[RMDB]
RNA sequence: GGGAACGACUCGAGUAGAGUCGAAAAGAUAUGGAUAUAACGAUCGAAGAACAUCUUACUAUUCGGAAACGAACGAAUAAGAUGGGAGAUCGAGUAUCCUAAGUCAAAAGCGGUGUUCGCACCGCAAGACAUCCUCAUGCUUCGGCAUGAGGAUGUCAAAAGAAACAACAACAACAAC
Reactivity to DMS in 0.01 (KOAc 150mM, MgCl2 10mM, bicine 150mM(pH8.5), 24C), signal-to-noise 1, nucleotides 027 to 126: g000a000u000a300u000g000g000a040u000a020u020a040a280c020g000a000u000c000g020a190a220g000a120a240c000a000u000c000u000u000a010c120u010a300u000u000c000g000g010a140a030a040c010g000a020a020c190g020a000a060u000a000a000g000a060u000g000g010g000a010g000a010u000c000g010a300g000u000a000u000c000c000u000a040a070g000u000c000a060a000a260a140g010c000g000g010u000g000u000u020c240g020c010a040c020c000g000c000a040a060
Reactivity to 2A3 in 0.01 (KOAc 150mM, MgCl2 10mM, bicine 150mM(pH8.5), 24C), signal-to-noise 1, nucleotides 027 to 126: g090a000u060a060u100g030g020a010u010a040u080a200a100c020g000a010u030c050g150a230a060g030a010a060c000a020u040c000u000u040a050c050u080a090u000u110c010g130g000a090a060a020c040g070a050a010c040g020a300a190u030a040a020g030a020u020g010g000g010a030g000a010u030c030g010a000g010u010a000u000c000c000u020a090a020g050u080c000a000a070a000a140g000c000g000g000u000g020u050u010c140g100c070a000c010c000g020c000a000a000
An RNA of 177 nucleotides, treated with DMS and 2A3 and read out base by base. The DMS profile rests on 559 reads. For 2A3 the reverse transcriptase was SuperScript II with manganese.